Source: RMDB library OK3TST, as collected in RNAgym. Structure probing data (DMS and 2A3) for a 207-nucleotide construct. The RNA was probed in 150 mM KOAc, 10 mM MgCl2 and 150 mM bicine (pH 8.5) at 24 C.
[RMDB]
RNA sequence: GGGAACGACUCGAGUAGAGUCGAAAACAGCACAGUAACAGUCUAUUUAAAAACAAUUACUAUGUUAUAUUUGAAUGUCUGUCAUAUGAAUUAAAGGAAUAAAGUAUUUCCUGGUUGAUCUCUUUACUUUCUGCCUUAAAAACACUGAGUUGGGUGAAUAUACUGACUAUUUCGAUAGUCAGUAUAUAAAAGAAACAACAACAACAAC
Reactivity to DMS in 0.01 (KOAc 150mM, MgCl2 10mM, bicine 150mM(pH8.5), 24C), signal-to-noise 1, nucleotides 027 to 156: c070a110g000c010a020c000a020g020u010a010a040c020a140g020u010c000u010a110u000u010u000a060a090a060a090a040c010a080a130u010u000a060c040u020a050u000g000u010u010a100u010a190u020u000u000g010a120a090u010g020u000c000u000g020u020c040a130u000a070u000g010a160a090u000u010a050a070a030g020g010a050a050u000a040a040a190g010u010a050u000u010u000c020c010u010g000g000u000u010g000a080u000c030u000c010u000u010u000a030c010u000u000u000c040u020g000c000c030u000u000a070a080a090a120a040c000a040c050u010g000a050g010u010u010g000g010g050u000g000a110
Reactivity to 2A3 in 0.01 (KOAc 150mM, MgCl2 10mM, bicine 150mM(pH8.5), 24C), signal-to-noise 3, nucleotides 027 to 156: c030a000g090c070a050c010a080g040u100a020a010c000a000g040u020c070u130a070u060u110u120a080a120a100a030a010c020a030a040u210u170a120c060u090a100u100g010u090u150a240u020a120u220u070u080g010a030a000u030g010u040c020u000g000u000c030a080u070a030u160g070a110a120u130u190a290a100a050g030g010a040a080u100a050a140a020g040u030a150u030u050u030c010c010u020g010g060u050u050g040a070u000c000u010c000u020u150u030a110c000u020u090u030c020u030g030c000c000u120u060a080a130a020a100a020c040a050c060u060g060a020g130u060u050g000g010g020u050g030a020
DMS (dimethyl sulfate) methylates the pairing face of unpaired adenines and cytosines. Values cover nucleotides 27 to 156. The DMS profile rests on 2,687 reads.